[RMDB]
Structure probing data (2A3 and DMS) for a 177-nucleotide construct.
RNA sequence: GGGAACGACUCGAGUAGAGUCGAAAAUUAAUCGGGCUUGUUUGCGCCGCGUAUGCGCUUGCUUGCUUGCUUGCGGGCGAACGGCCUUGUUCCCUUUUGGCGCUUGCUUGCGGGCGGGCAAAAUGAAAUGGUAAAGAUACUUCGGUAUCUUUACCAUAAAAGAAACAACAACAACAAC
Reactivity to 2A3 in 0.01 (KOAc 150mM, MgCl2 10mM, bicine 150mM(pH8.5), 24C), signal-to-noise 3, nucleotides 027 to 126: u130u040a060a080u060c050g030g000g000c070u160u300g040u080u050u030g030c190g070c030c010g020c000g010u070a080u170g020c050g000c020u070u150g060c060u140u120g010c010u080u130g000c020u030u110g010c020g000g000g000c020g000a020a010c020g010g020c000c000u020u030g000u000u000c000c010c010u000u110u020u010g020g010c010g000c010u010u030g020c000u030u060g020c130g040g040g010c010g000g020g050c000a060a030a040a060u160g030a150a130
Reactivity to DMS in 0.01 (KOAc 150mM, MgCl2 10mM, bicine 150mM(pH8.5), 24C), signal-to-noise 3, nucleotides 027 to 126: u010u020a090a100u000c030g010g000g000c010u000u010g040u000u000u000g010c010g020c020c010g000c020g020u010a060u000g020c040g000c080u010u010g020c200u010u010g010c020u000u000g020c010u000u010g020c010g010g010g010c000g000a010a020c020g010g010c010c010u000u000g010u000u000c000c000c010u000u000u010u000g000g000c130g010c010u000u000g000c030u000u010g010c050g020g000g010c000g010g010g000c010a020a060a050a060u010g010a080a100
The reactions ran in a buffer of 150 mM KOAc, 10 mM MgCl2 and 150 mM bicine (pH 8.5), at 24 C. Values cover nucleotides 27 to 126. 2A3 adducts were read by reverse transcription with SuperScript II with manganese.